[RMDB]
RNA sequence: GGGAACGACUCGAGUAGAGUCGAAAAUGUUCAGUCUUAAAGUACGAGUGACCGUUCACGUUUAGUCAUAAUGUACAAUGAAAGGCUUCCAGCUUACUAAGGCGUGUACGCGUGGCCGCUACUAUGGCCUCUUAAAGGACUUCGGUCCUUUAAGAGGAAAAGAAACAACAACAACAAC
Reactivity to 2A3 in 0.01 (KOAc 150mM, MgCl2 10mM, bicine 150mM(pH8.5), 24C), signal-to-noise 2, nucleotides 027 to 126: u160g000u020u090c070a070g070u040c050u070u160a150a140a030g010u010a020c030g040a060g140u020g120a040c010c010g030u040u030c050a030c000g030u070u050u100a020g040u020c050a040u010a230a050u260g070u090a080c110a050a070u160g080a060a030a020g040g010c000u170u030c050c120a010g010c010u050u050a020c040u020a070a060g090g020c000g010u030g020u020a000c020g030c050g040u040g030g010c000c000g100c070u010a030c000u040a080u180g130g000
Reactivity to DMS in 0.01 (KOAc 150mM, MgCl2 10mM, bicine 150mM(pH8.5), 24C), signal-to-noise 5, nucleotides 027 to 126: u010g010u000u010c120a090g020u000c060u010u000a090a080a090g010u000a030c000g010a250g040u000g010a020c020c030g010u000u000c060a050c050g030u000u000u010a060g010u000c060a050u010a080a150u000g000u000a060c160a130a080u010g000a100a130a060g000g000c020u010u020c130c100a090g020c050u000u010a300c090u010a050a050g000g030c030g010u000g000u000a020c040g010c150g020u000g000g010c010c020g000c160u000a020c060u000a060u010g000g010

An RNA of 177 nucleotides, treated with 2A3 and DMS and read out base by base. For 2A3, 1,601 sequencing reads were counted. For DMS the reverse transcriptase was MarathonRT. 2A3 adducts were read by reverse transcription with SuperScript II with manganese. Source: RMDB library OK2TRN, as collected in RNAgym. The DMS profile rests on 3,758 reads. The RNA was probed in 150 mM KOAc, 10 mM MgCl2 and 150 mM bicine (pH 8.5) at 24 C.